[RMDB]
RNA sequence: GGGAACGACUCGAGUAGAGUCGAAAAGUCUCGACGACCAACGCGCCGGCGGCGACUGCUGUCACCCGCGCCUCCUCUACCUAUCCCUUGUCAGGUUUGGUACCAAAGAGUACCGUACUGGACAAGCCUUAAGUGGGGUGUUCGCACCCCACUUAAGAAAAGAAACAACAACAACAAC
Reactivity to 2A3 in 0.01 (KOAc 150mM, MgCl2 10mM, bicine 150mM(pH8.5), 24C), signal-to-noise 6, nucleotides 027 to 126: g040u000c010u010c030g090a080c030g030a050c010c050a110a060c030g010c010g020c020c040g030g030c010g010g010c040g070a120c060u110g040c030u050g060u060c040a050c030c020c010g000c010g010c010c000u030c000c020u060c030u050a080c000c020u090a100u160c020c000c000u000u010g020u000c020a040g030g000u030u120u160g010g000u020a000c000c000a280a280a070g100a080g020u000a000c000c000g010u040a010c000u000g030g010a010c000a010a020g040c000
Reactivity to DMS in 0.01 (KOAc 150mM, MgCl2 10mM, bicine 150mM(pH8.5), 24C), signal-to-noise 2, nucleotides 027 to 126: g050u000c020u000c020g020a110c080g010a150c040c040a040a110c150g020c030g000c060c090g000g040c070g010g000c000g020a130c140u000g000c020u020g000u020c070a120c110c050c060g090c140g000c060c030u000c020c020u030c040u000a050c050c000u000a150u000c050c050c000u000u000g030u020c030a220g000g010u000u010u030g010g000u010a010c000c010a130a210a200g030a180g010u010a010c000c000g020u000a020c000u020g050g000a020c010a000a050g030c190